[RMDB]
RNA sequence: GGGAACGACUCGAGUAGAGUCGAAAAGAGAACCGAGACGUGCAGAGAGUGCCCGAAAUGAGACCAGAACUUGGGAGCCGAAAGAUGAGGCUGCACUCUUGAGAAUGUCUUAAGAAUAGGAUGAUCCGUAAAAUACUGUGUUCGCACAGUAUUUUACAAAAGAAACAACAACAACAAC
Reactivity to DMS in 0.01 (KOAc 150mM, MgCl2 10mM, bicine 150mM(pH8.5), 24C), signal-to-noise 4, nucleotides 027 to 126: g010a170g020a130a120c020c040g020a040g020a040c010g040u000g020c110a300g010a040g000a050g020u000g000c000c020c000g000a060a080a130u010g010a100g010a230c020c020a030g010a080a100c220u010u010g010g000g010a060g020c020c010g000a110a100a090g010a150u010g010a250g010g020c020u000g010c030a010c030u000c010u000u010g010a130g020a290a060u000g010u000c000u020u000a070a070g000a050a090u010a080g010g010a080u000g000a070u000c070c120
Reactivity to 2A3 in 0.01 (KOAc 150mM, MgCl2 10mM, bicine 150mM(pH8.5), 24C), signal-to-noise 2, nucleotides 027 to 126: g070a000g020a020a040c010c030g000a000g000a010c020g010u030g030c050a000g020a010g000a000g050u010g000c000c030c000g070a140a190a170u300g020a120g000a030c010c000a000g020a150a160c020u050u010g000g010g000a010g020c010c010g130a170a060a030g210a070u120g040a040g040g000c000u000g010c000a000c010u020c030u000u030g040a080g080a080a050u030g010u010c000u000u030a040a010g020a080a050u060a070g090g100a110u120g040a020u110c110c030
Structure probing data (DMS and 2A3) for a 177-nucleotide construct. As a SHAPE reagent, 2A3 marks flexible, mostly unpaired nucleotides at the ribose 2'-OH. The reactions ran in a buffer of 150 mM KOAc, 10 mM MgCl2 and 150 mM bicine (pH 8.5), at 24 C. The data come from the RNA Mapping Database (RMDB), library VIROID. For DMS the reverse transcriptase was MarathonRT.